RNA sequence: GGGAACGACUCGAGUAGAGUCGAAAAUCUUGAUAGUAUCUUUUUAUUAACCCAACGCGUAAAGCGUUGAAACUUUGGGUCAAUUUGAUCAUGGCAAAAUUAGAGACUGUUACUUUAGGUAACAUCGGGAAAGAUGGAAAACAAACUCUGGUCCUCACUCUUAGUCUGUCUUCGGACAGACUAAGAGAAAAGAAACAACAACAACAAC
Reactivity to 2A3 in 0.01 (KOAc 150mM, MgCl2 10mM, bicine 150mM(pH8.5), 24C), signal-to-noise 2, nucleotides 027 to 156: u040c010u020u090g020a050u090a110g050u040a080u080c000u030u100u060u080u040a160u110u170a080a060c040c000c000a010a020c010g010c000g060u140a060a120a210g000c010g000u010u020g040a010a040a000c070u120u110u060g060g010g000u010c000a030a220u140u050u200g020a010u040c040a040u040g050g000c030a050a040a030a170u150u070a070g010a010g020a110c090u020g000u050u030a010c030u070u210u180a020g000g030u000a000a020c020a020u040c040g000g060g040a020a080a060g060a020u050g060g050a020a040a100a040c050a020a050a000c060u030c040u040g000g060u020c010c000u040c040a020

The record gives the reactivity of an RNA of 207 nucleotides to 2A3. Conditions: 150 mM KOAc, 10 mM MgCl2 and 150 mM bicine (pH 8.5), 24 C. For 2A3 the reverse transcriptase was SuperScript II with manganese. Reactivities are given for positions 27 through 156.